[RMDB]
RNA sequence: GGGAACGACUCGAGUAGAGUCGAAAACGGGGUUGGAUCCGACUCUCAUAUGCUCUCCAACCCAACUCCUACUCAAUACGUCCUCGUCGUACAGAACGGUAACAUGUUUUCCGAACAUCCGCGCUUGCAAACCUGCCAAAGUUCGCUUUGGCAGGAACCUCAGAACAGACUUCGGUCUGUUCUGAGGAAAAGAAACAACAACAACAAC
Reactivity to 2A3 in 0.01 (KOAc 150mM, MgCl2 10mM, bicine 150mM(pH8.5), 24C), signal-to-noise 1, nucleotides 027 to 156: c060g000g000g000g000u000u000g000g020a010u100c040c100g070a150c000u040c020u020c070a180u220a050u300g000c010u020c000u050c010c010a000a000c040c000c000a010a040c010u010c010c000u020a020c010u020c060a070a120u050a260c060g070u010c000c000u040c030g180u090c000g030u080a040c000a050g020a200a060c020g050g020u060a020a020c020a090u110g040u090u020u020u000c030c050g010a050a010c000a090u050c060c010g070c010g080c020u090u120g000c030a120a070a120c000c000u000g020c010c000a000a000a000g000u010u050c120g030c020u030u000u000g000g020c000a000g000g000a000a020
Conditions: 150 mM KOAc, 10 mM MgCl2 and 150 mM bicine (pH 8.5), 24 C. Structure probing data (2A3) for a 207-nucleotide construct. Reactivities are given for positions 27 through 156.